[RMDB]
Notes
The record gives the reactivity of an RNA of 177 nucleotides to DMS. DMS adducts were read by reverse transcription with MarathonRT. Source: RMDB library RFMREP, as collected in RNAgym.

RNA sequence: GGGAACGACUCGAGUAGAGUCGAAAAAGAAAUCAAGAAUGAAGCAAGACAUUGAUUGAUAUGGUUGUUUUCGGUGCAUGUUUGAUUACUAAAAGUUGGGGCAUUCGAUGGUUUACAGAAGUCAUAAGGUGAAUCAUUAGUUCGCUAAUGAUUCACCAAAAGAAACAACAACAACAAC
Reactivity to DMS in 0.01 (KOAc 150mM, MgCl2 10mM, bicine 150mM(pH8.5), 24C), signal-to-noise 1, nucleotides 027 to 126: a050g000a130a080a000u000c030a040a030g000a020a070u000g010a040a100g020c100a050a110g040a110c010a040u000u000g000a120u000u000g010a040u000a090u010g020g020u000u000g000u000u000u000u000c070g000g000u000g010c060a060u010g000u000u000u030g000a060u000u020a030c110u010a070a040a080a110g020u000u000g010g000g000g010c030a050u010u000c020g010a110u000g000g000u000u010u000a070c080a140g000a040a050g010u020c060a070u010a070a110